Overview: The record gives the reactivity of an RNA of 177 nucleotides to 2A3. 2A3 adducts were read by reverse transcription with SuperScript II with manganese.
RNA sequence: GGGAACGACUCGAGUAGAGUCGAAAACGGAUCAGUGAUCACCACGUGGGUUUCACAGCGGUCGUCACUGGCUGGCACCAACCGUGCUCCUGGUUGCCAGCGGUCACACAGUGCAGUGGUGAUCUGCGGGAUGAUCAGGUUUCGACCUGAUCAUCCCAAAAGAAACAACAACAACAAC
Reactivity to 2A3 in 0.01 (KOAc 150mM, MgCl2 10mM, bicine 150mM(pH8.5), 24C), signal-to-noise 2, nucleotides 027 to 126: c080g060g000a050u140c010a050g110u050g020a010u000c000a000c000c040a050c060g100u050g030g120g000u060u220u200c090a070c000a000g020c060g110g030u080c010g040u020c020a000c010u040g190g000c000u010g000g000c020a000c000c040a070a050c070c020g110u100g000c000u000c020c010u030g020g000u100u170g000c000c020a000g000c000g000g040u040c000a000c000a000c000a020g100u060g110c100a050g000u010g000g020u030g040a000u000c000u020g010c020